RNA sequence: GGGAACGACUCGAGUAGAGUCGAAAACUUGUGAUCCGAGUGGAGACAACAGGAUGUUGGAACUAUGGGCCGAUCUCAUUAGGCCGGGUUCGGGUUGGCUAUUCACUGGCCUGCCCAUUCCAAGUCGGGAGUUGAGGGUUCGGGCUCGAGCGAAGGCGUGGUAAUCAAUGUUCGCAUUGAUUACCACAAAAGAAACAACAACAACAAC
Reactivity to DMS in 0.01 (KOAc 150mM, MgCl2 10mM, bicine 150mM(pH8.5), 24C), signal-to-noise 2, nucleotides 027 to 156: c000u000u010g020u010g000a050u020c030c010g000a110g030u010g020g020a190g010a110c030a060a060c030a110g010g010a120u010g020u000u000g030g000a080a050c060u000a040u000g030g040g000c020c000g000a110u000c100u000c150a140u010u000a110g010g000c020c010g000g040g040u000u000c050g030g010g030u000u030g010g000c000u010a060u010u000c140a140c200u000g000g030c010c010u000g000c030c000c020a140u000u010c000c010a020a080g010u000c030g000g020g020a110g010u010u010g010a230g000g030g010u000u000c030g010g030g020c000u010c040g000a030g000c030g000a090a060g020g010c140
Reactivity to 2A3 in 0.01 (KOAc 150mM, MgCl2 10mM, bicine 150mM(pH8.5), 24C), signal-to-noise 3, nucleotides 027 to 156: c040u040u070g060u140g120a040u040c010c030g010a020g030u100g020g030a040g020a050c030a040a020c020a040g160g050a150u120g080u030u030g010g030a020a020c020u080a220u220g030g040g000c020c000g050a090u040c050u050c150a110u120u150a080g000g000c000c010g000g020g000u030u020c030g010g000g000u020u000g000g000c010u030a050u210u300c100a080c220u100g020g020c000c020u010g000c000c010c000a020u040u030c010c010a030a020g120u030c040g000g030g020a070g010u060u070g030a070g030g030g010u040u030c020g000g060g000c000u020c020g000a000g000c020g030a070a030g080g010c070
Structure probing data (DMS and 2A3) for a 207-nucleotide construct. Reactivities are given for positions 27 through 156. For 2A3, 1,765 sequencing reads were counted. The reactions ran in a buffer of 150 mM KOAc, 10 mM MgCl2 and 150 mM bicine (pH 8.5), at 24 C.